Chemical mapping of a 177-nucleotide RNA with DMS and 2A3. For DMS the reverse transcriptase was MarathonRT. Conditions: 150 mM KOAc, 10 mM MgCl2 and 150 mM bicine (pH 8.5), 24 C. The data come from the RNA Mapping Database (RMDB), library RFMREP. For 2A3, 3,572 sequencing reads were counted.
RNA sequence: GGGAACGACUCGAGUAGAGUCGAAAACGGAGGGAGAAGGUGAAAUUACGAAGGAAAGAAAGAGAUGAGAAAUCAAGAAUGAAGCAAGACAUUGAUUGAUAUGGUUGUUUUCGGUGCAUGUUUGAUUACUAGUGUUAAUGUUCGCAUUAACACUAGUAAAAGAAACAACAACAACAAC
Reactivity to DMS in 0.01 (KOAc 150mM, MgCl2 10mM, bicine 150mM(pH8.5), 24C), signal-to-noise 3, nucleotides 027 to 126: c140g020g010a110g000g000g000a060g010a070a090g000g020u000g000a090a100a080u000u010a090c120g000a080a050g000g000a040a050a050g000a030a100a070g000a080g000a060u010g000a070g010a030a060a030u000c050a030a050g000a080a080u000g010a060a040g020c060a040a040g010a100c040a040u000u000g000a100u000u000g000a060u010a080u010g010g000u000u000g000u000u000u000u000c110g010g010u000g000c100a060u010g000u000u000u010g010a210u000u000
Reactivity to 2A3 in 0.01 (KOAc 150mM, MgCl2 10mM, bicine 150mM(pH8.5), 24C), signal-to-noise 3, nucleotides 027 to 126: c040g040g000a020g010g020g000a040g000a080a020g100g020u060g050a050a070a110u140u030a040c050g030a030a000g020g030a070a000a060g030a000a060a000g050a010g000a010u090g030a030g030a070a080a000u060c030a020a000g030a020a040u080g010a030a010g020c040a020a020g040a030c010a030u020u100g050a090u100u040g020a040u070a040u140g090g030u050u020g010u030u030u030u050c060g080g000u060g010c060a040u090g060u060u040u030g060a040u020u010